[RMDB]
RNA sequence: GGGAACGACUCGAGUAGAGUCGAAAACAGCGUAUAUACUAGUAUCGAUACUAGGCUAGCGAUCCGAUCACACUAGUAGAGAGAUAGGAUCUCACAUCUAGCUAGGAUCUAGGUGCGUAUCGACAUGCCUUGACAAUACCUUCGGGUAUUGUCAAGGAAAAGAAACAACAACAACAAC
Reactivity to DMS in 0.01 (KOAc 150mM, MgCl2 10mM, bicine 150mM(pH8.5), 24C), signal-to-noise 5, nucleotides 027 to 126: c100a160g010c080g050u000a040u000a130u010a150c060u010a070g020u010a150u000c030g010a050u010a040c000u020a280g020g000c030u000a080g090c230g010a060u010c050c000g000a100u010c160a110c120a080c060u000a020g000u000a080g000a130g000a020g000a010u000a090g000g030a300u000c020u000c020a030c060a130u000c010u000a020g060c050u000a130g010g000a010u000c000u000a100g010g020u000g000c090g000u000a030u020c020g020a070c160a090u000g000
Reactivity to 2A3 in 0.01 (KOAc 150mM, MgCl2 10mM, bicine 150mM(pH8.5), 24C), signal-to-noise 4, nucleotides 027 to 126: c030a000g060c080g150u080a090u030a010u060a260c100u080a040g150u050a050u090c010g010a000u010a070c010u030a050g220g110c020u010a010g030c020g100a020u030c000c000g040a080u110c040a030c010a010c100u050a010g040u070a060g040a000g010a000g020a050u060a090g130g070a060u000c020u030c010a060c010a050u030c000u000a000g000c020u030a050g020g020a000u000c000u010a030g060g090u030g020c040g010u010a030u040c020g040a010c010a060u090g030